[RMDB]
RNA sequence: GGGAACGACUCGAGUAGAGUCGAAAAACUUGGCCACUUCCACAGUGUGUGGAUAGGCUGUAUGAAGCCGCUCUGAGCCUCAGCAUCUUCAUUUCCAAGCUGAUGCUAAUUAAACGUCCCCCUGGGCCAUUGAUUGUAGAUUCGUCUACAAUCAAUGAAAAGAAACAACAACAACAAC
Reactivity to 2A3 in 0.01 (KOAc 150mM, MgCl2 10mM, bicine 150mM(pH8.5), 24C), signal-to-noise 8, nucleotides 027 to 126: a000c040u070u090g010g000c030c010a210c130u040u010c020c010a020c010a130g160u120g050u060g010u010g300g000a020u040a050g010g000c010u010g000u030a180u140g100a080a010g020c010c010g010c030u020c050u090g050a030g010c010c010u050c050a010g000c000a040u010c030u100u030c020a130u090u080u050c040c020a040a020g000c000u030g010a010u010g000c010u020a010a030u080u150a110a120a040c060g070u020c020c000c000c000c000u010g000g040g000c000
Reactivity to DMS in 0.01 (KOAc 150mM, MgCl2 10mM, bicine 150mM(pH8.5), 24C), signal-to-noise 9, nucleotides 027 to 126: a070c130u010u000g010g010c010c020a160c220u010u000c010c010a030c020a270g020u010g020u010g030u000g000g000a020u000a090g010g010c010u000g010u010a050u000g010a130a090g020c040c030g010c090u000c060u000g000a110g010c020c020u000c140a040g010c010a030u000c020u000u000c040a070u000u000u010c070c080a140a100g010c030u000g000a020u000g010c010u000a080a090u010u010a040a080a160c100g010u000c010c010c010c030c060u000g000g010g020c170
The record gives the reactivity of an RNA of 177 nucleotides to 2A3 and DMS. The RNA was probed in 150 mM KOAc, 10 mM MgCl2 and 150 mM bicine (pH 8.5) at 24 C. Reactivities are given for positions 27 through 126. For 2A3, 17,160 sequencing reads were counted. The data come from the RNA Mapping Database (RMDB), library OK2TST. The DMS profile rests on 33,774 reads.